RNA sequence: GGGAACGACUCGAGUAGAGUCGAAAACAAUGACCGGCCAUCAUCUGGCGAUGGCGCUGGCGACUCGCGCCAGGAUCGCGGUCGCCGAGGGCAAGCGGGAAGAAGCCGAACGCGACGCGCAUAAGGCGGAAUCCAGGCGGUUCGCCGCCUGGAUUCCAAAAGAAACAACAACAACAAC
Reactivity to 2A3 in 0.01 (KOAc 150mM, MgCl2 10mM, bicine 150mM(pH8.5), 24C), signal-to-noise 1, nucleotides 027 to 126: c120a090a010u120g050a060c000c000g110g120c000c000a000u060c000a050u140c070u260g170g000c090g020a020u000g100g000c040g000c000u000g000g070c000g000a050c000u100c300g020c000g070c080c130a060g060g060a040u300c000g000c000g000g120u000c000g000c000c010g000a110g000g000g040c000a110a110g100c000g180g000g030a090a130g010a170a000g040c010c020g040a080a050c000g000c020g150a190c060g070c000g000c110a040u090a160a060g120g000c060
Background: An RNA of 177 nucleotides, treated with 2A3 and read out base by base. Reactivities are given for positions 27 through 126.